Notes:
Structure probing data (2A3 and DMS) for a 177-nucleotide construct. The reactions ran in a buffer of 150 mM KOAc, 10 mM MgCl2 and 150 mM bicine (pH 8.5), at 24 C. Reactivities are given for positions 27 through 126. 2A3 adducts were read by reverse transcription with SuperScript II with manganese. For DMS the reverse transcriptase was MarathonRT. The 2A3 profile rests on 3,796 reads.

[RMDB]
RNA sequence: GGGAACGACUCGAGUAGAGUCGAAAAGAUAUGGACGUUCAAGCUCGACGAUCAUACGGCCGGGGGCAUGUAUAUCGGAAACGAUAUACAUGCCAAGAAUGUAUGGGAGAGCUGAACGUCCUAAGUCCUAUCACCACUCGUUCGCGAGUGGUGAUAGAAAAGAAACAACAACAACAAC
Reactivity to 2A3 in 0.01 (KOAc 150mM, MgCl2 10mM, bicine 150mM(pH8.5), 24C), signal-to-noise 2, nucleotides 027 to 126: g040a010u060a030u090g000g020a000c000g030u060u000c190a300a090g000c020u090c010g300a300c040g000a120u040c040a030u010a000c030g120g000c070c020g220g100g160g000g000c010a000u020g000u000a020u000a020u010c010g030g050a010a010a000c000g010a000u000a000u010a000c000a000u000g000c010c000a000a000g020a000a000u120g010u000a000u020g000g000g000a060g000a000g000c020u000g000a000a000c000g000u000c000c010u000a010a000g000u000c000
Reactivity to DMS in 0.01 (KOAc 150mM, MgCl2 10mM, bicine 150mM(pH8.5), 24C), signal-to-noise 3, nucleotides 027 to 126: g000a060u000a110u010g000g000a010c000g020u000u000c020a080a070g010c000u000c000g000a100c300g020a070u020c000a020u000a010c000g010g100c300c070g000g000g020g000g000c000a000u020g030u010a000u000a000u000c010g000g000a120a040a110c000g000a000u000a000u000a030c010a010u000g000c000c020a030a040g020a200a300u010g000u000a010u000g020g000g000a040g010a010g000c010u000g000a000a000c010g000u000c000c000u000a000a060g010u000c010